[RMDB]
RNA sequence: GGGAACGACUCGAGUAGAGUCGAAAAACAAAAUGCAUCUGAAGUGGCAUAUAAGAUAUCAAGUGAUACAUCUAGUGAUUUUCUGCUACGUGGGGCCGUUGGUUCAGGAAAGUCGACAGGUUUACCAAUUAUGCACAAACUUCGGUUUGUGCAUAAUAAAAGAAACAACAACAACAAC
Reactivity to DMS in 0.01 (KOAc 150mM, MgCl2 10mM, bicine 150mM(pH8.5), 24C), signal-to-noise 5, nucleotides 027 to 126: a080c090a080a080a110a070u030g010c040a040u030c070u010g010a080a100g010u020g000g000c020a090u000a080u010a110a090g010a100u020a050u000c060a140a150g020u030g000a130u030a060c120a060u010c020u010a120g020u020g000a060u000u010u000u010c030u000g000c050u010a020c080g030u020g000g000g010g010c050c080g000u000u000g020g010u000u010c080a030g000g000a080a040a080g020u010c030g000a040c130a060g010g000u000u000u010a080c040c060a090
Reactivity to 2A3 in 0.01 (KOAc 150mM, MgCl2 10mM, bicine 150mM(pH8.5), 24C), signal-to-noise 5, nucleotides 027 to 126: a000c120a020a090a040a000u080g030c030a050u030c060u170g050a120a020g040u020g080g000c040a000u130a000u030a140a040g070a030u050a020u060c070a150a130g100u090g160a080u090a110c030a050u020c040u100a070g070u040g110a140u070u050u030u000c030u050g020c010u030a030c030g050u110g000g000g000g030c000c010g030u050u080g000g020u040u050c030a020g030g090a110a010a010g030u010c000g020a020c030a020g030g060u030u040u050a080c000c010a000